The record gives the reactivity of an RNA of 177 nucleotides to 2A3 and DMS. The RNA was probed in 150 mM KOAc, 10 mM MgCl2 and 150 mM bicine (pH 8.5) at 24 C. Reactivities are given for positions 27 through 126. For 2A3 the reverse transcriptase was SuperScript II with manganese. For DMS, 3,335 sequencing reads were counted.
[RMDB]
RNA sequence: GGGAACGACUCGAGUAGAGUCGAAAAGAACCAGUGUUCGCACUGGUUCAAACCUGACAAGGGAGUCAGGAAAGUGUGGGAAAAGCACACUUAAACUCCCUAAAACCGUGAGCUUCGGCUCACGGAACUAAGCAAAAUGGUUCGCCAUUUUGCUUAGAAAAGAAACAACAACAACAAC
Reactivity to 2A3 in 0.01 (KOAc 150mM, MgCl2 10mM, bicine 150mM(pH8.5), 24C), signal-to-noise 2, nucleotides 027 to 126: g010a000a000c010c010a000g010u000g020u040u050c140g030c090a000c000u000g010g000u020u000c000a000a000a000c000c000u010g030a040c060a100a000g030g020g000a020g000u040c030a010g010g040a050a040a010g010u030g000u010g000g140g180a080a250a020a050g050c000a000c000a010c000u000u010a020a010a010c000u030c000c000c000u030a050a060a020a090c000c000g010u000g000a000g000c010u040u110c300g080g000c000u010c000a000c000g000g000a000a000
Reactivity to DMS in 0.01 (KOAc 150mM, MgCl2 10mM, bicine 150mM(pH8.5), 24C), signal-to-noise 3, nucleotides 027 to 126: g000a010a000c000c000a010g010u000g000u000u020c230g040c000a010c010u000g000g000u000u000c010a030a080a260c000c000u000g010a070c220a120a060g010g000g010a030g010u000c020a030g000g000a070a010a020g010u000g010u000g010g000g000a090a050a110a180g000c010a000c010a000c000u000u000a090a090a040c020u000c000c000c000u000a060a090a080a170c000c010g010u000g000a000g010c000u000u020c240g030g000c000u000c020a000c000g000g000a020a070